[RMDB]
RNA sequence: GGGAACGACUCGAGUAGAGUCGAAAAUGCGCUGCCCGAGGAAGACAAUGACCCCGCCCAAAAUCAGCAGUGGCGACAACCAGGAGAGAUCAAAGGUCAGCACUCGCGCCAUCAGUGCGGUGCCGACUGACUCUUCGUACUUCGGUACGAAGAGUCAAAAAGAAACAACAACAACAAC
Reactivity to 2A3 in 0.01 (KOAc 150mM, MgCl2 10mM, bicine 150mM(pH8.5), 24C), signal-to-noise 1, nucleotides 027 to 126: u110g010c030g050c000u080g030c030c010c070g050a040g000g050a040a030g000a100c070a130a070u200g030a080c010c000c030c000g130c030c010c000a070a210a000a080u170c060a020g030c000a000g000u010g060g050c030g030a050c060a090a020c020c020a000g000g020a060g030a000g010a050u110c120a140a130a040g030g000u000c020a030g020c010a000c060u300c010g020c010g010c050c020a230u140c040a080g010u000g000c000g000g000u000g010c000c000g010a000c030
Reactivity to DMS in 0.01 (KOAc 150mM, MgCl2 10mM, bicine 150mM(pH8.5), 24C), signal-to-noise 2, nucleotides 027 to 126: u000g040c070g020c030u010g040c040c030c050g010a090g000g020a050a090g000a080c060a060a070u030g010a160c080c040c020c090g000c020c000c020a070a060a100a090u010c110a080g030c030a060g020u010g020g010c020g000a100c110a060a100c040c030a090g000g000a040g040a020g020a120u000c180a030a140a140g010g010u000c000a010g010c010a000c010u040c070g010c030g010c010c150a130u010c200a110g000u000g020c020g010g080u020g010c000c050g000a020c030